Chemical mapping of a 177-nucleotide RNA with 2A3 and DMS. It was measured as part of the RMDB library OK2TST. The 2A3 profile rests on 3,717 reads. High DMS reactivity at an A or C suggests that its Watson-Crick edge is free. 2A3 adducts were read by reverse transcription with SuperScript II with manganese.
RNA sequence: GGGAACGACUCGAGUAGAGUCGAAAAGGGCUCGCAGUGCGAGUGGUGCUUUCCGCCACCCACGCAGAAGCCUAGGAAGUCGUAGCGCGAGUCGCGGAGAAGUCGGCUGACGAAAUUUCCGUAAUCACCACGGUUUUAUAUUCGUAUAAAACCGUGGAAAAGAAACAACAACAACAAC
Reactivity to 2A3 in 0.01 (KOAc 150mM, MgCl2 10mM, bicine 150mM(pH8.5), 24C), signal-to-noise 3, nucleotides 027 to 126: g020g010g000c010u020c020g000c090a120g020u030g040c050g100a130g050u010g000g010u040g040c140u150u140u030c080c030g000c000c000a000c000c000c000a000c000g000c030a030g060a120a010g000c000c010u020a030g020g040a040a010g030u040c020g020u040a010g020c030g010c040g100a030g050u100c020g020c050g050g060a080g000a060a020g090u040c000g010g040c040u080g060a020c010g010a060a070a120u040u020u000c000c000g020u070a060a090u140c060a030
Reactivity to DMS in 0.01 (KOAc 150mM, MgCl2 10mM, bicine 150mM(pH8.5), 24C), signal-to-noise 5, nucleotides 027 to 126: g010g010g020c010u000c040g010c090a140g030u010g030c120g010a100g040u000g010g010u000g000c240u000u010u010c290c040g000c010c000a020c000c000c010a020c040g010c020a090g000a140a040g020c020c010u000a050g000g000a090a050g020u000c010g010u010a070g010c020g020c030g000a030g010u000c030g010c140g010g010a130g000a060a090g010u000c010g000g010c050u000g000a080c020g010a040a050a130u010u000u010c000c000g010u020a090a120u010c180a210